[RMDB]
This 207-nucleotide RNA was probed chemically with DMS and 2A3. DMS adducts were read by reverse transcription with MarathonRT. It was measured as part of the RMDB library M2RFPK. The RNA was probed in 150 mM KOAc, 10 mM MgCl2 and 150 mM bicine (pH 8.5) at 24 C. For 2A3, 4,939 sequencing reads were counted. For 2A3 the reverse transcriptase was SuperScript II with manganese. For DMS, 3,345 sequencing reads were counted.
RNA sequence: GGGAACGACUCGAGUAGAGUCGAAAAGCAGUAUCUCGUUAGGCGAGGCUCCUAUACAAACACAGGUUGCUGAUCUGACGACGUCGAGAGACGCCCAAGAUUAGGACAGGAUCUAUCGAACCAAGGUGAACCUGUCCAGGGUUCGCCCUGGACAGAACCGAAAAUAGUGAUUCGUCACUAUUUUCGGAAAAGAAACAACAACAACAAC
Reactivity to DMS in 0.01 (KOAc 150mM, MgCl2 10mM, bicine 150mM(pH8.5), 24C), signal-to-noise 2, nucleotides 027 to 156: g000c060a100g010u000a080u010c020u010c010g050u000u000a120g040g000c020g020a120g000g020c000u020c000c000u010a110u010a180c070a130a080a100c080a080c110a060g010g000u010u010g000c010u000g030a050u000c010u000g000a150c000g020a040c030g020u000c000g010a300g020a300g020a020c000g010c000c010c050a140a070g000a030u000u000a100g000g020a160c060a040g000g010a220u000c020u000a100u000c020g010a060a100c020c030a060a100g010g010u010g000a060a030c100c010u000g010u010c020c010a070g000g010g040u000u010c300g030c000c000c000u000g010g010a030c000a010g010a040a150
Reactivity to 2A3 in 0.01 (KOAc 150mM, MgCl2 10mM, bicine 150mM(pH8.5), 24C), signal-to-noise 5, nucleotides 027 to 156: g030c050a020g030u120a140u100c040u020c040g050u040u150a080g050g040c030g020a050g000g030c010u030c000c010u130a130u070a210c120a050a180a010c080a010c040a090g120g000u100u120g080c010u010g010a050u000c010u060g010a030c030g020a020c000g020u010c010g010a020g000a010g000a100c010g020c010c020c000a020a000g030a060u060u070a000g020g040a030c030a060g070g010a030u020c040u070a090u130c090g060a030a050c020c010a060a040g090g000u060g050a040a040c010c000u000g000u000c000c000a000g010g000g000u030u020c140g080c030c000c000u000g000g020a000c000a000g000a000a020